[RMDB]
RNA sequence: GGGAACGACUCGAGUAGAGUCGAAAAGGCUUUCUCAGGCCUAUGCCGGAGCCUCGAGGGCUGGAGAGCGGGAAGACAGGCAGUGCUCGGGGAGUUGCAGCAGGACAUCACCAGGAGGGCGAAGCGGCCGCAUAGACAGGUUCGCCUGUCUAUGCGGAAAAGAAACAACAACAACAAC
Reactivity to DMS in 0.01 (KOAc 150mM, MgCl2 10mM, bicine 150mM(pH8.5), 24C), signal-to-noise 2, nucleotides 027 to 126: g020g030c030u000u000u010c040u000c130a140g010g040c010c070u000a070u010g000c020c020g020g000a170g010c050c020u000c070g020a050g000g000g020c000u000g010g010a090g000a080g040c070g020g020g000a140a060g010a070c110a080g010g000c040a050g040u000g010c030u020c070g020g030g000g000a050g000u000u000g000c070a080g030c060a090g000g000a100c050a060u000c050a090c030c050a070g020g010a060g010g000g020c070g000a070a090g010c140g000g010
Reactivity to 2A3 in 0.01 (KOAc 150mM, MgCl2 10mM, bicine 150mM(pH8.5), 24C), signal-to-noise 1, nucleotides 027 to 126: g020g000c040u070u070u060c110u050c060a000g000g040c050c030u060a050u180g030c040c040g070g040a030g080c000c000u020c000g020a030g000g070g040c030u040g030g050a100g020a020g030c080g020g040g030a100a010g080a070c030a020g000g050c010a010g020u030g120c040u050c030g040g000g040g000a050g000u120u140g020c050a040g050c000a020g020g010a000c010a110u080c020a030c040c030a010g040g010a020g040g020g050c030g010a080a010g040c020g060g000